Source information:
The data come from the RNA Mapping Database (RMDB), library M2PK50. An RNA of 177 nucleotides, treated with 2A3 and DMS and read out base by base. Conditions: 150 mM KOAc, 10 mM MgCl2 and 150 mM bicine (pH 8.5), 24 C. 2A3 is a SHAPE reagent: it acylates the 2'-hydroxyl of flexible nucleotides of all four kinds.
RNA sequence: GGGAACGACUCGAGUAGAGUCGAAAACGGAGACUGUUCGCAGUCUCCGAAAGGAGCGCGCUUUUGCGCUAAGGCCAUACGGACAGCCCGCUCCAAAGCCGAAAAUCCGGCGGUUCGCCGCCGGAAACUACAUGUUAGGCUUCGGCCUAACAUGUAGAAAAGAAACAACAACAACAAC
Reactivity to 2A3 in 0.01 (KOAc 150mM, MgCl2 10mM, bicine 150mM(pH8.5), 24C), signal-to-noise 2, nucleotides 027 to 126: c010g000g010a000g000a000c010u000g060u130u120c270g010c150a000g010u010c000u000c000c010g000a020a010a000g010g010a000g010c000g020c010g040c040u120u160u300u300g010c050g000c090u050a110a140g020g000c030c000a020u050a070c010g020g000a010c010a010g000c000c010c040g000c000u000c020c000a000a010a020g000c010c010g110a120a020a000a060u020c000c000g000g000c030g040g030u050u030c200g040c090c000g000c000c000g000g000a030a000a020
Reactivity to DMS in 0.01 (KOAc 150mM, MgCl2 10mM, bicine 150mM(pH8.5), 24C), signal-to-noise 1, nucleotides 027 to 126: c010g030g000a020g020a000c010u000g000u000u030c180g040c000a000g020u000c000u000c010c000g010a020a050a060g000g000a010g040c010g030c070g000c010u010u010u000u020g000c020g010c030u000a030a110g000g010c010c020a040u010a100c080g000g010a020c010a110g000c000c010c020g020c000u000c010c000a140a070a130g010c010c000g000a300a070a110a070u000c000c000g010g040c000g020g020u000u030c180g030c020c000g000c000c000g000g000a000a010a050